[RMDB]
RNA sequence: GGGAACGACUCGAGUAGAGUCGAAAAUUACACUGAGAGCAUUUAGCCUGAUUACUCUUUAAAUCAAAUCAGGCAGUAGAGAGAAACUCGAGAGGUGAAAACCCCACAGCAUUCUGAAAUGUAUUUGAAGGCAACGCUACCUUCGGGUAGCGUUGAACACUUGUUCCAACUUCGGUUGGAACAAGUGAAAAGAAACAACAACAACAAC
Reactivity to 2A3 in 0.01 (KOAc 150mM, MgCl2 10mM, bicine 150mM(pH8.5), 24C), signal-to-noise 1, nucleotides 027 to 156: u160u040a050c040a000c050u150g060a040g000a000g090c040a050u000u040u100a050g000c000c000u040g000a020u000u100a100c060u020c030u140u300u270a040a030a020u210c060a040a040a000u010c000a020g000g000c010a000g000u020a000g020a020g000a000g000a000a090a060c010u000c040g070a070g000a010g020g000u000g010a150a000a000a000c000c010c030c010a060c000a040g020c000a080u150u070c040u160g100a120a170a010u110g030u110a160u140u050u210g080a050a000g020g050c000a000a000c000g010c000u000a040c000c020u010u050c000g010g020g010u000a010g090c000g020u000u000g000a020a000